[RMDB]
RNA sequence: GGGAACGACUCGAGUAGAGUCGAAAACGGGGUCAUGGAGAUGUCCACGAGCACCAGACACGGCGGGCCCCGGGCGAGGGGCCGCUCGGCGAUGAGCGCGGACAGGCGCGGGAGCUGUGCUGCCAGAACAGAAGAUACGUUUCGACGUAUCUUCUGUAAAAGAAACAACAACAACAAC
Reactivity to DMS in 0.01 (KOAc 150mM, MgCl2 10mM, bicine 150mM(pH8.5), 24C), signal-to-noise 6, nucleotides 027 to 126: c080g000g000g000g020u020c030a080u010g010g010a070g010a120u010g010u000c010c020a090c070g000a080g020c040a090c040c030a110g020a130c090a100c100g000g010c020g010g010g020c000c010c000c000g020g010g010c150g000a160g000g000g010g010c020c000g000c010u010c040g010g000c060g000a110u020g000a110g010c010g010c030g020g000a070c080a080g000g000c030g000c010g000g000g000a130g000c050u000g010u000g010c020u000g020c020c020a120g010a140
Reactivity to 2A3 in 0.01 (KOAc 150mM, MgCl2 10mM, bicine 150mM(pH8.5), 24C), signal-to-noise 6, nucleotides 027 to 126: c030g000g010g020g020u070c050a090u140g080g020a120g030a090u090g060u040c010c020a040c050g030a030g010c030a040c030c020a010g040a020c060a010c050g050g010c040g020g040g090c000c000c000c030g030g050g010c090g060a120g000g000g000g020c010c000g010c010u040c010g050g000c030g060a070u100g060a040g030c040g010c030g020g030a040c040a090g050g040c030g000c000g030g020g010a040g000c020u030g010u040g050c010u030g020c020c020a050g030a060